Structure probing data (2A3 and DMS) for a 207-nucleotide construct. The DMS profile rests on 5,250 reads.

RNA sequence: GGGAACGACUCGAGUAGAGUCGAAAAUCAGAAGAAGGCAUUGUUAUAAGGGAUGACAGCUCCCUGUGUGUUAUCGCCCUUGAAGACCUUCUAAUGGGACAAGGUGUGGAGGUGGGAGACAGUGAUAUUGAUGAUCCUGACCCGGUUUAGGCCUAGAACUACUGACCUAUUUCGAUAGGUCAGUAGUAAAAGAAACAACAACAACAAC
Reactivity to 2A3 in 0.01 (KOAc 150mM, MgCl2 10mM, bicine 150mM(pH8.5), 24C), signal-to-noise 3, nucleotides 027 to 156: u090c010a000g100a130a000g020a010a020g020g000c040a080u060u190g140u150u170a170u080a110a020g070g000g010a040u050g000a020c030a030g060c030u110c020c040c010u040g020u060g000u000g000u050u040a050u100c100g060c030c000c020u020u030g040a050a020g070a090c010c000u090u030c020u100a060a060u180g000g000g010a010c040a100a030g010g000u100g050u100g160g010a100g010g060u070g020g040g000a020g020a010c020a000g070u100g130a000u020a010u100u200g040a100u150g000a010u020c000c000u060g030a100c000c010c000g010g030u060u050u080a040g010g010c020c010u040a030g040a020
Reactivity to DMS in 0.01 (KOAc 150mM, MgCl2 10mM, bicine 150mM(pH8.5), 24C), signal-to-noise 2, nucleotides 027 to 156: u000c010a130g030a150a080g000a070a030g000g000c020a140u010u000g020u010u000a140u020a060a040g000g040g010a020u000g050a070c010a040g000c010u000c050c040c040u000g010u010g030u000g010u000u000a040u000c010g000c000c010c030u020u000g000a220a250g000a060c000c020u000u000c040u000a060a240u000g010g000g000a130c050a060a050g000g040u000g030u000g030g010a070g040g010u000g000g020g000a080g000a070c060a080g020u020g030a130u010a170u010u000g000a160u010g000a110u000c030c020u010g000a170c010c010c010g000g000u000u000u000a040g010g010c030c010u000a070g010a130
Source information
Source: RMDB library OK3TST, as collected in RNAgym.